An RNA of 207 nucleotides, treated with DMS and 2A3 and read out base by base. The reactions ran in a buffer of 150 mM KOAc, 10 mM MgCl2 and 150 mM bicine (pH 8.5), at 24 C. High 2A3 reactivity points to a flexible backbone, as in loops and unpaired stretches. For DMS the reverse transcriptase was MarathonRT. The data come from the RNA Mapping Database (RMDB), library OK3TST.
RNA sequence: GGGAACGACUCGAGUAGAGUCGAAAAGCACAAGAGAGGCAGUAGAGUAACCUUUGUAUGACCAGAUGUGAUGAUGGACUAGGGUGGUAGUGGAGGAAAUGGGAAAACUGGUUAAUGUUAGCACAUACUUUGAAUGCAAAGCUGGCAGGAUUUAAUACGCAUAAAAUUAGUUCGCUAAUUUUAUGCGAAAAGAAACAACAACAACAAC
Reactivity to DMS in 0.01 (KOAc 150mM, MgCl2 10mM, bicine 150mM(pH8.5), 24C), signal-to-noise 2, nucleotides 027 to 156: g020c040a050c050a090a130g020a120g030a040g000g000c010a080g020u010a070g010a090g040u000a120a140c060c060u030u000u000g050u000a080u010g000a100c030c000a120g040a080u000g030u010g030a090u020g010a160u010g010g000a120c040u000a070g010g020g020u000g020g020u000a050g000u010g010g010a090g010g000a020a030a110u000g010g020g000a050a060a090a090c020u000g000g000u010u010a060a070u000g010u000u000a080g040c010a050c060a080u010a050c070u000u000u000g050a090a070u010g020c060a050a090a110g000c020u000g030g000c060a030g000g000a160u000u000u000a040a070u020a120
Reactivity to 2A3 in 0.01 (KOAc 150mM, MgCl2 10mM, bicine 150mM(pH8.5), 24C), signal-to-noise 5, nucleotides 027 to 156: g010c000a010c010a040a020g020a000g000a010g040g030c020a030g020u090a020g010a010g020u060a070a070c010c000u060u090u100g090u080a100u120g060a060c030c070a040g020a090u060g040u040g050a070u020g020a020u050g010g020a030c050u050a050g070g010g000u050g040g020u070a080g040u040g040g020a030g020g010a050a070a050u080g020g000g000a000a060a020a050c030u040g010g010u040u080a060a040u080g020u030u050a020g000c020a010c010a070u070a040c020u080u070u140g070a090a020u060g010c020a060a070a050g020c010u010g020g000c010a030g010g010a010u080u110u140a060a080u200a110